[RMDB]
RNA sequence: GGGAACGACUCGAGUAGAGUCGAAAAAAAAAGUAAGCGUAAUUAUGAUACAUAAAAACGUUAGGUCAAGGUGUAACCUAUGAAAUGGGAAGAAAUGGGCUACAUUCUCUACACCAAGAGAAUCAAGCACGAAAGUUAUUAUGAAACCAAUAACCAACCUUAUUGACGUGUUCGCACGUCAAUAAGGAAAAGAAACAACAACAACAAC
Reactivity to DMS in 0.01 (KOAc 150mM, MgCl2 10mM, bicine 150mM(pH8.5), 24C), signal-to-noise 1, nucleotides 027 to 156: a140a070a070a040a200g040u010a080a120g010c000g030u010a040a120u010u010a050u010g010a190u000a010c020a080u000a020a090a060a060a020c080g040u000u000a060g010g030u000c020a050a040g080g000u000g020u000a060a010c010c020u000a070u000g000a020a040a090u000g020g000g010a100a040g010a070a100a050u010g010g010g010c030u000a120c060a050u000u000c010u000c070u000a190c040a130c160c090a080a040g000a010g010a030a010u000c050a030a070g040c020a000c030g000a120a060a080g010u010u000a030u000u020a090u000g000a090a030a050c030c030a000a040u000a070a070c020c010a050a140
Reactivity to 2A3 in 0.01 (KOAc 150mM, MgCl2 10mM, bicine 150mM(pH8.5), 24C), signal-to-noise 2, nucleotides 027 to 156: a000a000a000a000a000g090u130a180a040g060c060g100u080a180a070u030u110a040u150g150a070u120a130c090a010u110a070a020a020a020a020c020g040u090u050a010g070g000u030c100a110a020g000g000u000g020u070a030a030c010c010u010a010u040g180a020a010a080u150g000g000g000a000a130g010a030a100a010u030g000g000g020c020u030a030c010a000u010u040c000u000c000u000a030c010a060c100c100a040a000g010a000g000a040a010u010c030a000a070g060c050a010c040g020a120a000a000g050u030u040a000u120u060a090u110g150a060a090a000c010c020a010a050u110a040a030c010c030a000a040